[RMDB]
RNA sequence: GGGAACGACUCGAGUAGAGUCGAAAAGCCAUGAUUUUAUUGAGAUUUUUGAGGGACUGGAUCUAGCACAAAACCUUGUCCCACAGUGCUUGAGUUAGUUCAAAGAUCAUGACUAUUGUGCUAAUCCGAUCAGCGUACUGUUCGCAGUACGCUGAUCAAAAGAAACAACAACAACAAC
Reactivity to 2A3 in 0.01 (KOAc 150mM, MgCl2 10mM, bicine 150mM(pH8.5), 24C), signal-to-noise 2, nucleotides 027 to 126: g000c010c000a000u010g030a020u000u080u120u270a140u090u200g040a110g000a100u100u250u120u140u110g040a100g000g000g000a000c010u010g010g010a020u040c040u040a010g000c000a000c010a020a090a040a050c020c010u050u130g010u000c030c010c010a000c000a000g090u070g050c020u060u000g040a070g100u150u190a080g060u130u150c040a040a050a000g020a000u000c000a010u020g010a000c000u040a070u220u040g000u000g020c040u020a050a030u060c030c030
Reactivity to DMS in 0.01 (KOAc 150mM, MgCl2 10mM, bicine 150mM(pH8.5), 24C), signal-to-noise 1, nucleotides 027 to 126: g000c020c000a020u010g010a000u040u000u000u000a140u030u030g020a090g020a160u000u000u000u000u000g020a170g000g000g040a020c040u000g000g000a050u000c050u000a000g010c010a010c000a020a060a090a060c050c010u000u020g010u000c000c000c040a110c060a060g020u000g000c020u000u010g010a040g000u030u020a100g000u000u000c170a130a060a040g020a000u000c030a000u000g000a030c010u000a090u010u000g010u000g000c010u000a070a090u020c110c040
An RNA of 177 nucleotides, treated with 2A3 and DMS and read out base by base.
Conditions: 150 mM KOAc, 10 mM MgCl2 and 150 mM bicine (pH 8.5), 24 C.
Reactivities are given for positions 27 through 126.
2A3 adducts were read by reverse transcription with SuperScript II with manganese.